RNA sequence: GGGAACGACUCGAGUAGAGUCGAAAAUACAAGUACGAAAGUACAAGCCUUAUCAGUUGGGCCUUCUGGUCAAAUUAGCGCUCACCCAGGAGGACCUUCGCAUGAGGUCGACAAGCGCUAAAAGAAACAACCCCAAUCAGUUCGCUGAUUGGGGUUGAAAAGAAACAACAACAACAAC
Reactivity to DMS in 0.01 (KOAc 150mM, MgCl2 10mM, bicine 150mM(pH8.5), 24C), signal-to-noise 1, nucleotides 027 to 126: u000a120c160a050a110g060u000a020c010g000a150a050a190g030u000a010c000a160a170g000c010c000u020u040a020u020c260a070g020u010u000g010g000g000c000c020u000u000c000u000g000g000u050c070a020a020a030u000u000a000g020c000g000c010u010c120a170c300c010c020a010g000g000a030g000g000a050c000c000u000u020c160g000c200a030u010g000a000g020g000u000c040g000a130c180a090a020g020c020g030c010u000a000a040a100a200g000a070a090a080